[RMDB]
RNA sequence: GGGAACGACUCGAGUAGAGUCGAAAAGUAAAGUGGAUAGCUUGAGAAGUGUUAGUGUAAUAUAUAUAGAAAACAUAUUGUAAUGGCUAAGAACAAGAUUCUAGCACUAGGCUGUUCCAGUGAGUCUAUUUUUAGCUGCGUGACUUAGGGCAAGUUAGAUAUGGUCAGCAUUCGUGCUGACCAUAUCAAAAGAAACAACAACAACAAC
Reactivity to DMS in 0.01 (KOAc 150mM, MgCl2 10mM, bicine 150mM(pH8.5), 24C), signal-to-noise 2, nucleotides 027 to 156: g030u000a030a020a110g010u010g000g000a110u000a100g010c010u010u000g000a300g020a100a080g040u000g010u000u000a080g000u020g000u000a050a200u000a140u010a070u000a220u000a250g000a190a140a050a080c040a030u010a080u000u000g010u010a100a130u000g020g020c050u020a040a100g040a020a050c010a050a140g010a300u000u000c010u020a150g030c000a060c010u000a040g040g000c010u000g030u000u000c020c040a050g000u010g000a070g000u000c050u000a030u000u000u000u030u020a090g020c010u020g020c030g020u000g010a050c030u000u000a130g000g010g020c060a050a040g040u000u000a090
Reactivity to 2A3 in 0.01 (KOAc 150mM, MgCl2 10mM, bicine 150mM(pH8.5), 24C), signal-to-noise 2, nucleotides 027 to 156: g060u100a000a090a020g030u050g000g010a000u000a020g010c030u060u140g050a050g010a110a030g010u010g000u060u040a050g010u030g030u050a120a050u090a100u010a000u020a000u080a300g060a020a110a070a050c030a030u100a090u060u150g020u090a050a150u140g060g000c080u070a110a000g030a130a030c010a080a000g070a140u080u050c010u020a000g000c000a000c000u020a010g010g000c010u010g020u070u030c010c010a000g010u010g050a000g040u030c050u060a160u040u170u000u030u020a020g000c030u050g020c050g060u050g010a050c000u000u000a030g000g000g010c040a060a050g060u050u080a010

Structure probing data (DMS and 2A3) for a 207-nucleotide construct. High 2A3 reactivity points to a flexible backbone, as in loops and unpaired stretches.